[RMDB]
RNA sequence: GGGAACGACUCGAGUAGAGUCGAAAAAGGCUCUGAGCAGCAACACGCAUGGAAGCUGGUGAGUGGGUUCAAAGGAGGUGCGCCGGGAUGGGGUGCUGUCUUAUGUAGCAUCACAAUUAAUGUGGGUGGCACUGUUAAUAGCCUGUCUUACAGAUCAGUACCAAUUUGCUUUCGAGCAAAUUGGUACAAAAGAAACAACAACAACAAC
Reactivity to 2A3 in 0.01 (KOAc 150mM, MgCl2 10mM, bicine 150mM(pH8.5), 24C), signal-to-noise 1, nucleotides 027 to 156: a000g040g010c000u000c000u000g040a010g010c040a010g000c000a010a030c010a080c150g070c060a110u110g020g040a010a000g000c000u130g040g000u000g000a050g000u070g000g000g060u170u000c080a100a010a000g070g000a050g030g120u020g000c010g010c000c050g200g020g000a040u080g010g010g000g050u000g000c010u000g060u120c010u020u200a160u300g040u030a000g070c000a000u080c010a010c000a050a050u150u170a120a040u200g020u040g100g000g000u010g150g000c000a000c040u010g010u070u050a060a060u070a010g010c000c000u020g060u000c030u060u020a060c000a030g270a120u300c030a010
Description: The data come from the RNA Mapping Database (RMDB), library OK3TST. The record gives the reactivity of an RNA of 207 nucleotides to 2A3. The 2A3 profile rests on 479 reads. Conditions: 150 mM KOAc, 10 mM MgCl2 and 150 mM bicine (pH 8.5), 24 C.